Structure probing data (DMS and 2A3) for a 177-nucleotide construct. DMS adducts were read by reverse transcription with MarathonRT. Values cover nucleotides 27 to 126. In probing experiments dimethyl sulfate is read out at A N1 and C N3, which are open when not base-paired. For 2A3, 738 sequencing reads were counted.

RNA sequence: GGGAACGACUCGAGUAGAGUCGAAAAGCGAUCUCCGUUAAUGGACACCAUGUCCUCGGACAUCAGUGUCAGCUGGGAGCUUUGCUUGACCAGCGAAUGGAAGGAGCCUCUCAGGCCACGCUCCGCAGGUCGAGCGGGUGUUCGCACCCGCUCGACCAAAAGAAACAACAACAACAAC
Reactivity to DMS in 0.01 (KOAc 150mM, MgCl2 10mM, bicine 150mM(pH8.5), 24C), signal-to-noise 1, nucleotides 027 to 126: g140c000g000a110u040c030u000c040c000g000u020u180a060a110u050g000g000a000c020a000c000c280a090u000g040u040c000c000u120c230g000g000a050c090a010u000c300a300g000u010g000u000c070a010g010c000u000g030g000g000a020g000c040u000u030u020g000c010u000u030g000a150c080c000a030g030c000g010a000a060u040g000g000a080a040g000g000a230g000c080c080u000c030u000c070a220g040g000c040c000a110c090g010c080u000c050c000g080c190a010
Reactivity to 2A3 in 0.01 (KOAc 150mM, MgCl2 10mM, bicine 150mM(pH8.5), 24C), signal-to-noise 2, nucleotides 027 to 126: g010c020g030a100u030c000u000c000c000g060u050u020a110a120u270g180g000a000c000a000c030c070a000u040g030u000c000c000u000c100g160g000a000c000a020u110c100a030g000u000g000u070c080a060g000c000u030g000g000g000a010g040c000u140u090u300g010c030u130u000g090a150c000c010a010g000c030g000a050a080u140g040g020a030a060g060g080a010g010c000c000u050c000u030c030a020g090g000c000c030a020c030g050c000u080c000c020g060c080a040